[RMDB]
RNA sequence: GGGAACGACUCGAGUAGAGUCGAAAAUGGUGUUAACUAGUUUUUUUAGCUUAUGGAUGAUAUUCAGCCUUAAAGAUGCUUAUACAAAAGCUGUAAUGUUAACUUACUUUUAGGUCUAUCAAUUUCAUCUUACAAGCGAAUUCGUUCGCUUGUAAGAAAAAGAAACAACAACAACAAC
Reactivity to 2A3 in 0.01 (KOAc 150mM, MgCl2 10mM, bicine 150mM(pH8.5), 24C), signal-to-noise 1, nucleotides 027 to 126: u070g000g000u000g000u010u050a060a010c010u010a100g030u020u090u010u000u000u020u070a010g010c010u150u040a050u150g010g030a020u010g000a000u100a140u210u160c030a030g000c010c000u020u070a030a120a050g050a010u060g030c000u090u060a010u020a180c090a010a110a000a000g010c010u010g110u090a040a040u100g010u070u060a040a010c000u020u100a010c000u000u000u000u070a070g000g030u000c060u040a100u130c010a070a020u120u070u050c000a020
Reactivity to DMS in 0.01 (KOAc 150mM, MgCl2 10mM, bicine 150mM(pH8.5), 24C), signal-to-noise 2, nucleotides 027 to 126: u000g000g000u010g000u000u000a010a030c030u000a080g000u000u000u010u020u000u020u010a050g020c030u000u010a070u000g000g010a040u000g000a110u000a110u000u000c070a060g000c000c020u000u000a050a050a150g000a090u000g010c050u000u000a090u010a100c230a020a040a030a030g010c020u010g000u000a060a090u010g000u000u010a020a010c030u000u000a060c030u000u000u000u000a030g010g000u010c060u000a080u010c100a040a130u020u010u010c100a080

Source: RMDB library OK2TST, as collected in RNAgym. Chemical mapping of a 177-nucleotide RNA with 2A3 and DMS. 2A3 adducts were read by reverse transcription with SuperScript II with manganese. Reactivities are given for positions 27 through 126. For DMS the reverse transcriptase was MarathonRT. The 2A3 profile rests on 916 reads.